The data come from the RNA Mapping Database (RMDB), library M2PK50. An RNA of 177 nucleotides, treated with DMS and 2A3 and read out base by base. 2A3 adducts were read by reverse transcription with SuperScript II with manganese. Conditions: 150 mM KOAc, 10 mM MgCl2 and 150 mM bicine (pH 8.5), 24 C. High 2A3 reactivity points to a flexible backbone, as in loops and unpaired stretches.

[RMDB]
RNA sequence: GGGAACGACUCGAGUAGAGUCGAAAAAUGCACUGGUUCGCCAGUGCAUGAUUAGCGAGAAAGUACCUCGGUAUAAAAGUGCAACCCUUGGAAACAAGGGAAUUCCGAACCGAUUCGUCGGUUCGAACUUCUAAUACCUAUUCGUAGGUAUUAGAAGAAAAGAAACAACAACAACAAC
Reactivity to DMS in 0.01 (KOAc 150mM, MgCl2 10mM, bicine 150mM(pH8.5), 24C), signal-to-noise 9, nucleotides 027 to 126: a010u000g000c000a000c000u000g000g010u000u010c240g020c000c000a010g010u000g010c000a000u000g000a120u010u010a130g010c010g000a010g000a050a070a150g010u000a030c030c000u000c010g000g010u010a070u010a020a020a030a050g020u000g010c030a160a190c010c000c000u000u000g000g000a180a090a200c000a000a010g000g000g000a030a030u010u010c090c010g010a010a010c000c000g000a030u000u010c190g010u000c000g010g010u000u000c000g000a020a070
Reactivity to 2A3 in 0.01 (KOAc 150mM, MgCl2 10mM, bicine 150mM(pH8.5), 24C), signal-to-noise 9, nucleotides 027 to 126: a000u000g000c000a000c000u010g000g040u050u040c140g050c070c000a000g000u000g000c000a000u000g000a010u000u100a030g040c010g000a010g010a040a180a040g030u020a020c000c010u010c010g000g040u170a080u030a120a050a020a010g030u030g020c020a060a170c000c000c000u000u000g020g010a050a040a020c000a010a000g010g000g040a010a030u080u010c060c000g000a000a000c000c000g000a010u030u050c190g040u000c000g050g000u000u000c000g000a000a010